The record gives the reactivity of an RNA of 207 nucleotides to 2A3. Reactivities are given for positions 27 through 156. 2A3 adducts were read by reverse transcription with SuperScript II with manganese.

RNA sequence: GGGAACGACUCGAGUAGAGUCGAAAAUCCUAAGUCUAAUUCUCUAGCGUGCACUUUGAUCGCUCGUAGUUGUUCGGAAACGAACAGGUUCGAAGAGCGGGAGUGUCGGGAUUAGAUAUGGAAAACCCUUUGCUGACGUUCGCGUCAGCAAAGGGAACCAAAGGCAUUGGUUCGCCAAUGCCUUUGGAAAAGAAACAACAACAACAAC
Reactivity to 2A3 in 0.01 (KOAc 150mM, MgCl2 10mM, bicine 150mM(pH8.5), 24C), signal-to-noise 2, nucleotides 027 to 156: u020c010c000u010a080a010g000u000c000u000a000a040u200u000c060u020c120u160a080g140c080g190u190g020c040a000c000u070u050u090g120a200u180c000g030c020u000c000g060u040a130g300u070u050g000u000u010c010g000g060a100a120a100c000g000a010a000c010a030g150g130u110u130c070g080a140a060g030a090g010c000g000g010g000a000g000u010g020u020c050g010g010g000a000u020u000a000g000a000u070a060u120g050g010a040a080a010a090c000c000c000u010u010u000g000c000u020g020a040c000g040u050u020c260g010c000g110u020c010a000g000c000a000a010a000g000g000g000a010a000